[RMDB]
Overview: Structure probing data (2A3 and DMS) for a 177-nucleotide construct. For DMS the reverse transcriptase was MarathonRT.
RNA sequence: GGGAACGACUCGAGUAGAGUCGAAAAGGGAAAACAAUGAAAGGUUUGCAAGAAAUUCCAGCGAUGAUCGCCACUGAAGCGGCUUUCAUGUGUUUCGCAUAUGGACUGAAGGUCAUAACGCACAAUGGGUUCGAUUAGUGUUCGCACUAAUCGAACCAAAAGAAACAACAACAACAAC
Reactivity to 2A3 in 0.01 (KOAc 150mM, MgCl2 10mM, bicine 150mM(pH8.5), 24C), signal-to-noise 1, nucleotides 027 to 126: g090g000g000a120a000a000a000c040a020a110u000g140a130a040a140g010g060u030u070u070g020c020a000a020g070a060a120a050u160u100c000c000a040g090c000g040a040u060g110a060u100c010g000c000c020a080c080u150g030a130a010g100c030g000g000c000u030u010u000c000a000u080g040u000g000u010u050u090c020g040c000a010u000a000u080g120g000a090c010u050g040a030a060g000g040u000c000a040u090a150a020c040g020c060a010c020a100a060u160g110
Reactivity to DMS in 0.01 (KOAc 150mM, MgCl2 10mM, bicine 150mM(pH8.5), 24C), signal-to-noise 1, nucleotides 027 to 126: g020g050g000a020a100a010a110c020a080a040u070g000a220a060a050g000g030u060u000u050g020c040a110a110g010a040a100a130u020u010c130c000a100g000c070g000a240u020g000a050u000c000g000c070c000a060c240u040g020a150a120g000c070g040g000c010u000u000u040c010a000u000g000u000g030u000u000u000c060g000c090a050u000a170u000g000g000a030c110u050g000a040a020g010g000u000c040a080u000a150a050c060g000c090a020c210a060a050u080g000

The DMS profile rests on 934 reads.